This 177-nucleotide RNA was probed chemically with DMS and 2A3.
Source: RMDB library TTRDEL, as collected in RNAgym.
For 2A3, 1,278 sequencing reads were counted.
The RNA was probed in 150 mM KOAc, 10 mM MgCl2 and 150 mM bicine (pH 8.5) at 24 C.

[RMDB]
RNA sequence: GGGAACGACUCGAGUAGAGUCGAAAAGAUAUGGAAUUCAACAGUGAAAUACGCAAGUAAGGAUUCGGAAACGAAUCCCUUAUGAUGACCGGAGAAUUCCUAAGUCAAAUCGAGCUUCGGCUCGAAACUCAACAUCCCGUUUCGACGGGAUGUUGAGAAAAGAAACAACAACAACAAC
Reactivity to DMS in 0.01 (KOAc 150mM, MgCl2 10mM, bicine 150mM(pH8.5), 24C), signal-to-noise 1, nucleotides 027 to 126: g000a020u000a060u010g020g000a010a050u000u000c030a010a300c040a180g010u010g000a100a260a100u000a220c220g000c110a080a080g000u000a010a010g000g010a000u000u000c010g030g000a000a020a010c010g050a000a020u000c150c050c040u000u000a000u000g020a070u000g020a030c150c150g020g020a300g000a040a040u000u000c000c000u000a030a110g000u000c000a020a120a090u020c000g000a040g040c010u010u010c090g070g020c000u000c000g000a040a040a070
Reactivity to 2A3 in 0.01 (KOAc 150mM, MgCl2 10mM, bicine 150mM(pH8.5), 24C), signal-to-noise 1, nucleotides 027 to 126: g020a000u040a000u100g030g000a040a000u000u000c010a010a040c000a050g110u100g300a180a230a080u300a170c150g000c220a140a130g000u000a010a000g000g010a000u040u000c010g000g010a000a000a000c020g000a010a000u070c210c000c000u020u040a020u060g130a120u150g100a030c020c130g100g020a060g020a010a000u000u010c000c010u000a030a010g000u010c030a030a000a280u090c010g000a000g000c020u100u100c260g170g000c000u030c010g000a030a020a020
DMS adducts were read by reverse transcription with MarathonRT. 2A3 adducts were read by reverse transcription with SuperScript II with manganese. Reactivities are rounded to 0.1 and cut off at 0 and 3.